Conditions: 150 mM KOAc, 10 mM MgCl2 and 150 mM bicine (pH 8.5), 24 C. An RNA of 177 nucleotides, treated with DMS and 2A3 and read out base by base. As a SHAPE reagent, 2A3 marks flexible, mostly unpaired nucleotides at the ribose 2'-OH.
[RMDB]
RNA sequence: GGGAACGACUCGAGUAGAGUCGAAAAGACCUGACGCAGUCGCCUUUCUCACGUGUGGCAUUGUGCGCUCCAUUCACAGUUCUUGUGCAGCCAUCAGAAGGGUAUGAGGUCACAAUUGACGCCGACGCCAUUACUGUUGCUUCGGCAACAGUAAUGGAAAAGAAACAACAACAACAAC
Reactivity to DMS in 0.01 (KOAc 150mM, MgCl2 10mM, bicine 150mM(pH8.5), 24C), signal-to-noise 2, nucleotides 027 to 126: g000a070c000c010u020g000a070c080g010c110a080g010u000c060g060c040c030u010u010u020c020u000c100a160c160g000u030g000u010g010g020c050a080u010u010g000u010g000c100g000c000u000c030c060a080u000u000c060a010c090a140g000u000u000c080u020u000g020u000g000c140a120g010c040c020a030u000c100a070g000a080a080g010g000g010u000a070u010g010a090g030g000u010c030a020c070a090a100u000u010g000a110c030g000c000c010g010a090c240g010
Reactivity to 2A3 in 0.01 (KOAc 150mM, MgCl2 10mM, bicine 150mM(pH8.5), 24C), signal-to-noise 2, nucleotides 027 to 126: g010a010c000c010u040g040a020c040g010c180a070g060u010c020g050c000c010u010u040u000c020u070c040a080c100g160u210g000u020g070g040c010a070u170u070g040u020g020c000g020c040u000c030c050a140u170u080c040a060c030a120g040u130u000c040u180u180g000u030g030c040a020g010c030c000a050u040c020a050g040a090a030g040g000g000u080a060u150g070a030g040g060u070c020a000c030a060a060u030u100g040a020c050g020c040c050g060a050c070g000